[RMDB]
Conditions: 150 mM KOAc, 10 mM MgCl2 and 150 mM bicine (pH 8.5), 24 C. This 177-nucleotide RNA was probed chemically with 2A3 and DMS.
RNA sequence: GGGAACGACUCGAGUAGAGUCGAAAACACUUUAUUUAAGUAUAGUGUGAUUGCAUCACCUUUAUUACUUAUGAAUAGCGUGGUUGUACCACCUUAGUGUGCUUUAUAUUAUAGCUUAUGAAGAGCACCCGUAUUACCCAUUCGUGGGUAAUACGGGAAAAGAAACAACAACAACAAC
Reactivity to 2A3 in 0.01 (KOAc 150mM, MgCl2 10mM, bicine 150mM(pH8.5), 24C), signal-to-noise 7, nucleotides 027 to 126: c020a010c000u080u090u140a150u090u110u010a060a010g020u010a010u060a050g130u120g000u000g130a040u040u170g030c130a080u040c000a010c020c000u090u160u110a140u090u100a030c010u010u030a020u090g190a090a090u070a110g080c100g020u010g010g070u080u110g070u170a180c000c000a010c010c020u060u080a030g020u030g010u020g060c040u010u130u050a180u030a040u190u080a090u100a110g030c030u090u040a070u280g110a080a060g010a000g040c010a040
Reactivity to DMS in 0.01 (KOAc 150mM, MgCl2 10mM, bicine 150mM(pH8.5), 24C), signal-to-noise 4, nucleotides 027 to 126: c000a020c030u000u000u040a040u030u010u000a010a010g000u000a010u000a060g010u060g040u010g010a020u020u090g000c040a300u000c000a010c000c020u010u030u050a060u000u010a010c020u000u000a000u030g000a090a090u010a030g010c180g010u000g010g010u000u010g000u000a180c000c000a080c090c020u000u000a010g000u010g020u010g000c020u010u020u000a040u000a010u000u000a090u010a150g030c090u010u000a070u030g030a070a020g000a040g010c050a230
For 2A3 the reverse transcriptase was SuperScript II with manganese.